An RNA of 177 nucleotides, treated with 2A3 and DMS and read out base by base.
RNA sequence: GGGAACGACUCGAGUAGAGUCGAAAAAAGCCGAAAUGUUGCAAUCUUCUGGCGGGAAGAGACCGGGUGGUACGGCCACCUCACGCGAUCGUACUUGUAACCGAUAGGGCUCCUACCUCUUGCGUACCACAAUCCACACGUUCGCGUGUGGAUUGUGAAAAGAAACAACAACAACAAC
Reactivity to 2A3 in 0.01 (KOAc 150mM, MgCl2 10mM, bicine 150mM(pH8.5), 24C), signal-to-noise 1, nucleotides 027 to 126: a040a000g130c070c030g000a100a110a140u100g050u100u000g080c030a130a140u040c030u050u010c000u060g080g040c030g000g000g000a010a000g030a000g020a090c000c060g040g020g000u010g030g000u010a140c040g060g090c000c020a030c000c000u050c000a050c040g070c020g010a010u010c000g000u010a050c000u050u040g050u110a070a000c000c080g050a170u120a090g000g000g000c030u060c000c000u030a090c020c000u000c000u060u090g050c020g100u040a150c040
Reactivity to DMS in 0.01 (KOAc 150mM, MgCl2 10mM, bicine 150mM(pH8.5), 24C), signal-to-noise 1, nucleotides 027 to 126: a000a080g030c000c000g060a080a110a080u020g000u030u000g000c130a130a060u000c030u040u000c120u000g030g000c090g000g000g000a120a040g000a000g000a130c160c000g000g000g030u000g000g020u000a080c020g010g000c000c010a090c040c080u010c210a000c170g000c110g000a010u000c090g000u040a080c090u000u000g030u080a240a080c120c020g000a080u000a140g000g000g080c060u000c030c000u010a040c050c000u070c080u000u000g010c070g010u050a070c020